[RMDB]
RNA sequence: GGGAACGACUCGAGUAGAGUCGAAAAGGCGUCUUCGCUGCCUCGGCCGCCCUGCACUGACCGGUAGCCGCCGUAAUGGCGGCAUUGUUCCCAUAAAUGGAUGUGGGUGUGGGUGACGAAGUAGCAGACGCUCAUACUACUUCGGUAGUAUGAGCGUAAAAGAAACAACAACAACAAC
Reactivity to DMS in 0.01 (KOAc 150mM, MgCl2 10mM, bicine 150mM(pH8.5), 24C), signal-to-noise 4, nucleotides 027 to 126: g000g000c040g010u000c030u000u020c160g030c010u000g010c020c020u010c010g020g010c100c000g000c010c010c010u020g030c010a030c020u010g010a090c020c060g010g010u000a160g010c010c000g020c000c000g020u010a140a110u020g010g020c010g010g000c000a020u010u010g010u000u000c010c000c010a130u010a050a090a130u010g000g000a150u010g020u010g010g000g000u000g020u010g010g010g020u000g010a120c020g000a030a010g020u000a010g020c010a090g000
Reactivity to 2A3 in 0.01 (KOAc 150mM, MgCl2 10mM, bicine 150mM(pH8.5), 24C), signal-to-noise 2, nucleotides 027 to 126: g100g010c040g050u000c030u170u140c110g030c000u000g000c000c000u010c000g030g000c110c020g020c030c020c000u050g000c000a010c030u080g120a080c000c050g050g030u060a030g000c000c020g020c000c000g020u080a120a130u260g010g000c000g000g000c010a000u000u030g000u000u010c040c020c010a020u210a040a160a040u220g060g050a070u080g030u070g160g000g010u020g010u040g020g010g000u010g020a000c000g010a010a000g000u000a000g000c000a000g000